This 177-nucleotide RNA was probed chemically with 2A3 and DMS.

[RMDB]
RNA sequence: GGGAACGACUCGAGUAGAGUCGAAAAUCUGACCAUAAUGACAUAAGGAGUUCAUUUCACACCAAACAUCUUUCCAGCAUGUUUCUCCCAUUGAGAAACAUCCUAGCAUUUAAGGCCUCUUAAUGUACCACUAUCUCCUGUUCGCAGGAGAUAGUGGAAAAGAAACAACAACAACAAC
Reactivity to 2A3 in 0.01 (KOAc 150mM, MgCl2 10mM, bicine 150mM(pH8.5), 24C), signal-to-noise 7, nucleotides 027 to 126: u020c030u040g090a080c020c000a010u110a090a100u140g060a030c030a040u120a120a110g070g010a040g030u050u030c030a050u040u060u060c040a030c020a030c040c060a100a110a070c030a080u040c030u050u090u010c030c010a010g000c020a050u000g000u000u020u000c010u020c030c120c060a130u140u300g000a000g000a000a010a010c000a010u010c000c010u000a020g010c030a090u060u060u110a100a020g040g020c000c020u080c010u050u070a050a020u100g020u050a080
Reactivity to DMS in 0.01 (KOAc 150mM, MgCl2 10mM, bicine 150mM(pH8.5), 24C), signal-to-noise 2, nucleotides 027 to 126: u010c050u010g020a100c080c050a040u030a060a060u010g020a010c090a080u010a090a060g010g000a070g000u040u000c060a050u000u000u000c060a020c060a070c090c030a040a110a130c130a040u020c030u010u000u010c050c050a060g020c170a050u000g000u000u000u000c000u000c000c300c180a080u010u040g000a020g000a030a020a010c010a020u000c100c020u010a080g030c110a010u000u010u030a070a130g000g000c130c100u000c040u000u000a050a010u000g000u000a240
The RNA was probed in 150 mM KOAc, 10 mM MgCl2 and 150 mM bicine (pH 8.5) at 24 C. DMS adducts were read by reverse transcription with MarathonRT.